The record gives the reactivity of an RNA of 177 nucleotides to DMS and 2A3. For DMS the reverse transcriptase was MarathonRT. For 2A3 the reverse transcriptase was SuperScript II with manganese.

[RMDB]
RNA sequence: GGGAACGACUCGAGUAGAGUCGAAAAGAAGCUGUCUUCGGACAGCUUCGGUUUAUUUCGUGUAAUCGUCGAGUCGUUCCCAUGAUUACAAGAAAUAAUUUGCUGUCUGCGGAUUCGUCCGCAGAAAAGGACUUUAUAGUUUCGACUAUAAAGUCCUAAAAGAAACAACAACAACAAC
Reactivity to DMS in 0.01 (KOAc 150mM, MgCl2 10mM, bicine 150mM(pH8.5), 24C), signal-to-noise 2, nucleotides 027 to 126: g010a010a000g010c020u010g000u000c010u000u030c220g030g000a010c000a010g010c000u010u000c000g000g010u010u010u000a090u000u000u000c000g020u010g020u000a110a100u000c020g010u000c040g020a020g020u000c000g000u010u000c000c000c020a000u000g010a060u000u010a050c140a110a060g000a060a080a110u000a050a060u000u000u010g000c090u000g010u000c010u000g000c000g000g010a040u000u000c210g020u000c010c000g000c000a010g000a000a020a110
Reactivity to 2A3 in 0.01 (KOAc 150mM, MgCl2 10mM, bicine 150mM(pH8.5), 24C), signal-to-noise 1, nucleotides 027 to 126: g010a020a000g000c000u000g000u000c000u040u030c190g060g020a000c010a000g000c010u020u000c000g020g000u000u020u080a100u010u000u050c010g020u080g070u130a090a150u040c020g050u010c020g090a000g000u010c010g000u040u000c020c000c000a010u000g010a020u010u040a020c000a000a150g110a090a050a020u150a050a090u090u100u180g160c120u100g030u040c010u010g010c020g000g000a000u010u050c090g050u040c000c000g000c010a010g000a000a000a000